This 177-nucleotide RNA was probed chemically with DMS and 2A3. Values cover nucleotides 27 to 126. The reactions ran in a buffer of 150 mM KOAc, 10 mM MgCl2 and 150 mM bicine (pH 8.5), at 24 C.
RNA sequence: GGGAACGACUCGAGUAGAGUCGAAAAAAUGAAACAAACACCGUUCCUCUUCGCAUUCUUUUUUACCUUCCCCUGAACGGGAGGCGUUUCGUCGUGUGAAACAGAAUGCGAAGACGAACAAUAAGGCAGCUAACAUAUCCUUCGGGAUAUGUUAGCUAAAAGAAACAACAACAACAAC
Reactivity to DMS in 0.01 (KOAc 150mM, MgCl2 10mM, bicine 150mM(pH8.5), 24C), signal-to-noise 2, nucleotides 027 to 126: a060a110u020g010a130a120a030c170a090a060a220c280a110c080c050g000u000u000c000c070u000c000u000u000c000g000c000a000u000u000c000u000u000u000u000u000u000a000c030c100u000u000c010c000c010c020u000g010a080a160c300g000g000g000a100g070g010c050g000u020u000u010c050g040u000c020g040u060g000u000g000a000a000a000c030a020g000a000a000u020g030c040g010a020a020g000a020c200g020a000a010c000a150a120u080a090a120g000g000c280
Reactivity to 2A3 in 0.01 (KOAc 150mM, MgCl2 10mM, bicine 150mM(pH8.5), 24C), signal-to-noise 5, nucleotides 027 to 126: a000a010u300g090a070a050a020c120a020a060a010c100a030c030c060g000u000u000c020c010u000c000u010u000c000g000c000a000u010u020c030u000u030u010u000u010u030a020c000c040u050u120c010c000c010c030u100g110a150a060c050g000g000g000a010g010g010c020g040u130u210u130c080g030u020c040g050u040g010u000g120a000a010a000c010a010g000a000a000u000g000c010g020a000a000g000a000c000g000a000a000c020a000a070u180a090a030g150g040c090